This 177-nucleotide RNA was probed chemically with DMS and 2A3. Reactivities are rounded to 0.1 and cut off at 0 and 3. For 2A3 the reverse transcriptase was SuperScript II with manganese. The RNA was probed in 150 mM KOAc, 10 mM MgCl2 and 150 mM bicine (pH 8.5) at 24 C. The 2A3 profile rests on 75,406 reads.

RNA sequence: GGGAACGACUCGAGUAGAGUCGAAAAGACUCUUACAAAGGGAAAGUUGUAUGAGUAUGGUUCUUACUUUCCCACUAUUGGACAUUUAAGAACCUAAGUUGCUAUUGCGUCCAAUAGAUAGCAACUGGCAGAGCAGGCUAUUCGUAGUCUGUUCUGCAAAAGAAACAACAACAACAAC
Reactivity to DMS in 0.01 (KOAc 150mM, MgCl2 10mM, bicine 150mM(pH8.5), 24C), signal-to-noise 9, nucleotides 027 to 126: g000a040c000u000c000u000u000a010c010a010a040a140g010g010g010a060a070a090g010u000u000g000u000a020u000g000a030g010u000a060u010g010g010u000u000c010u000u000a080c130u000u000u000c000c000c040a200c170u000a050u000u000g000g000a030c030a160u010u000u010a050a050g010a040a040c070c050u010a000a040g010u000u000g000c000u000a030u000u000g010c130g000u000c010c010a030a040u000a080g000a020u000a010g000c000a000a010c010u000g010
Reactivity to 2A3 in 0.01 (KOAc 150mM, MgCl2 10mM, bicine 150mM(pH8.5), 24C), signal-to-noise 9, nucleotides 027 to 126: g010a000c000u000c000u000u020a000c000a010a030a010g080g030g040a050a040a040g020u010u010g010u010a040u080g010a000g010u030a060u100g060g010u020u000c010u020u010a030c010u010u010u010c000c010c010a020c020u040a050u010u050g010g000a000c010a030u080u090u070a060a020g010a020a000c000c000u000a000a010g000u000u000g000c000u010a010u020u110g040c040g020u000c000c000a010a010u050a060g040a000u010a000g000c000a000a010c000u010g050